[RMDB]
RNA sequence: GGGAACGACUCGAGUAGAGUCGAAAAUAAGCUCCCAAGCAGUGGGAGGAGCCAGGGCUCUGACCGCGUGCCUGUUGAAGAAUGAGCCGGCGACUCAUAGGCAGUGGCUUGGUUAAGGGAACCCACCGUAGUCCACUCUUUUCGAAGAGUGGACUACAAAAGAAACAACAACAACAAC
Reactivity to 2A3 in 0.01 (KOAc 150mM, MgCl2 10mM, bicine 150mM(pH8.5), 24C), signal-to-noise 4, nucleotides 027 to 126: u130a030a040g050c020u030c010c000c010a010a040g040c060a020g040u040g010g060g000a040g010g000a020g030c020c030a160g120g130g010c020u000c000u030g080a080c010c010g000c000g030u030g020c000c020u080g050u130u160g100a150a110g060a010a080u110g030a020g030c020c030g060g000c070g070a060c010u020c040a080u100a060g040g000c040a010g060u060g200g040c010u030u090g000g050u140u100a120a130g000g020g010a010a020c010c000c000a060c050c040
Reactivity to DMS in 0.01 (KOAc 150mM, MgCl2 10mM, bicine 150mM(pH8.5), 24C), signal-to-noise 2, nucleotides 027 to 126: u050a090a160g010c090u000c010c010c000a030a030g010c070a230g020u020g000g010g000a300g000g000a000g000c000c050a160g040g010g000c000u000c020u000g010a300c020c010g000c070g000u010g040c010c030u000g020u000u000g020a050a030g030a110a110u000g010a070g000c000c030g020g000c080g010a180c050u000c000a070u010a110g040g000c000a090g010u020g020g020c010u020u010g060g000u010u010a070a060g010g010g000a110a120c000c010c040a080c250c220

This 177-nucleotide RNA was probed chemically with 2A3 and DMS. The RNA was probed in 150 mM KOAc, 10 mM MgCl2 and 150 mM bicine (pH 8.5) at 24 C. It was measured as part of the RMDB library OK1LIB. For 2A3, 2,267 sequencing reads were counted.